[RMDB]
The record gives the reactivity of an RNA of 177 nucleotides to DMS and 2A3.

RNA sequence: GGGAACGACUCGAGUAGAGUCGAAAAGGAGGAACCUUCGGGUUCCUCCCAUUACCGAGAACGUUGCUCGGUAUAAACAAGGAACCCUUGGAAACAAGGGAAAUAUUCACGUCUUCGGACGUGAAAACGUAGAUGAUGCUUUCGAGCAUCAUCUACGAAAAGAAACAACAACAACAAC
Reactivity to DMS in 0.01 (KOAc 150mM, MgCl2 10mM, bicine 150mM(pH8.5), 24C), signal-to-noise 2, nucleotides 027 to 126: g000g000a000g000g000a020a030c000c000u030u000c200g030g030g000u000u000c000c000u000c000c000c030a040u030u000a000c000c000g000a010g000a070a190c300g020u010u000g030c010u010c000g010g000u000a020u000a010a100a140c200a140a160g010g010a100a150c000c000c000u000u000g000g000a170a130a160c030a030a000g000g000g000a020a020a040u010a100u010u000c000a010c000g010u000c000u000u010c170g010g000a000c000g020u000g000a000a000a030a140
Reactivity to 2A3 in 0.01 (KOAc 150mM, MgCl2 10mM, bicine 150mM(pH8.5), 24C), signal-to-noise 1, nucleotides 027 to 126: g020g000a020g020g020a000a020c030c060u080u090c280g050g000g000u000u000c000c000u040c010c010c000a000u000u010a000c000c000g010a000g010a050a110c210g080u130u260g000c000u000c000g010g000u000a040u020a010a010a010c010a020a040g220g020a080a100c000c000c000u020u000g040g010a060a060a030c000a020a000g000g040g000a040a000a000u050a010u010u000c010a000c000g010u000c010u010u070c200g060g000a010c000g000u010g000a000a050a010a000
For 2A3, 1,682 sequencing reads were counted. Values cover nucleotides 27 to 126. Conditions: 150 mM KOAc, 10 mM MgCl2 and 150 mM bicine (pH 8.5), 24 C. The data come from the RNA Mapping Database (RMDB), library M2PK50.